RNA sequence: GGGAACGACUCGAGUAGAGUCGAAAAGAUAUGGAACAUGUGAUCGUCUGGUGUAGACAUGAAGCUAGGGUCGGAAACGACCCAAACUUCAACAGCUACACCAGACGAUCACCGCUGUUCCUAAGUCCGACUAGGUAUUGUUCGCAAUACCUAGUCGAAAAGAAACAACAACAACAAC
Reactivity to DMS in 0.01 (KOAc 150mM, MgCl2 10mM, bicine 150mM(pH8.5), 24C), signal-to-noise 2, nucleotides 027 to 126: g000a080u030a300u020g020g000a010a000c010a010u000g000u000g010a020u000c010g030u000c010u010g030g000u000g000u000a000g030a050c080a250u010g000a000a000g010c010u000a300g010g000g010u000c000g010g000a130a150a280c020g020a000c000c000c000a000a020a080c000u000u000c010a030a040c300a240g020c010u000a000c010a000c010c000a000g000a000c010g010a000u000c000a000c030c000g000c010u000g010u000u000c000c000u000a040a090g000u020c030
An RNA of 177 nucleotides, treated with DMS and read out base by base. The RNA was probed in 150 mM KOAc, 10 mM MgCl2 and 150 mM bicine (pH 8.5) at 24 C. Reactivities are given for positions 27 through 126. DMS adducts were read by reverse transcription with MarathonRT.